Source: RMDB library OK1LIB, as collected in RNAgym. Chemical mapping of a 177-nucleotide RNA with 2A3 and DMS. The DMS profile rests on 10,036 reads. Reactivities are rounded to 0.1 and cut off at 0 and 3. The reactions ran in a buffer of 150 mM KOAc, 10 mM MgCl2 and 150 mM bicine (pH 8.5), at 24 C.
[RMDB]
RNA sequence: GGGAACGACUCGAGUAGAGUCGAAAAGCGGCCCUGCGGCCACCCGGUGAACUUCACAGUGUCUUCCGAGCAUCCUGGCAGUGUCGGCAUCGUUGCAGCUCAGCAACCAAUAAACGGACCUACUCCAUACUCAGUGAGUAUUCGUACUCACUGAGUAAAAAGAAACAACAACAACAAC
Reactivity to 2A3 in 0.01 (KOAc 150mM, MgCl2 10mM, bicine 150mM(pH8.5), 24C), signal-to-noise 9, nucleotides 027 to 126: g040c020g010g010c000c000c040u060g030c060g020g000c020c010a040c010c010c000g000g030u080g040a100a080c040u120u100c070a030c020a110g030u020g020u050c010u130u040c020c010g020a030g020c010a050u040c010c020u020g040g010c020a030g020u010g040u120c020g030g010c020a040u060c060g050u030u060g000c030a030g010c030u020c080a020g010c020a010a050c020c010a050a050u140a180a120a010c040g030g020a020c010c000u030a040c020u030c020c010a010
Reactivity to DMS in 0.01 (KOAc 150mM, MgCl2 10mM, bicine 150mM(pH8.5), 24C), signal-to-noise 5, nucleotides 027 to 126: g020c050g020g000c020c000c060u030g030c100g010g020c020c050a050c070c010c060g060g000u010g000a060a100c070u030u010c080a100c110a030g010u000g030u000c020u010u010c040c010g020a100g000c040a110u020c040c000u000g000g000c080a050g020u020g010u010c060g000g010c080a060u000c080g000u000u010g010c030a100g010c090u000c070a080g010c040a040a060c040c050a070a030u030a020a090a120c090g000g000a070c020c000u000a050c040u000c040c070a180